[RMDB]
RNA sequence: GGGAACGACUCGAGUAGAGUCGAAAAGAUAUGGACUCUCGUUAGAGCACUUGGACCCUUAACAACACGCUAUUCGGAAACGAAUAGCGUGUUGUUAAGGCUAGUGCCUAACGAGGAGUCCUAAGUCGUUUAAUACGUCCUUCGGGACGUAUUAAACAAAAGAAACAACAACAACAAC
Reactivity to DMS in 0.01 (KOAc 150mM, MgCl2 10mM, bicine 150mM(pH8.5), 24C), signal-to-noise 2, nucleotides 027 to 126: g000a160u010a300u000g020g010a010c000u000c000u000c000g000u000u010a010g000a250g020c000a000c010u000u000g010g010a130c300c020c000u000u000a000a000c010a000a010c000a000c000g020c000u000a000u020u010c000g030g000a160a110a160c000g020a000a000u010a010g020c010g010u000g010u000u000g010u020u010a000a010g000g010c010u010a010g010u000g000c000c000u000a000a010c000g020a020g020g020a000g010u000c000c000u000a010a060g000u010c110
An RNA of 177 nucleotides, treated with DMS and read out base by base. Reactivities are given for positions 27 through 126. For DMS, 2,164 sequencing reads were counted.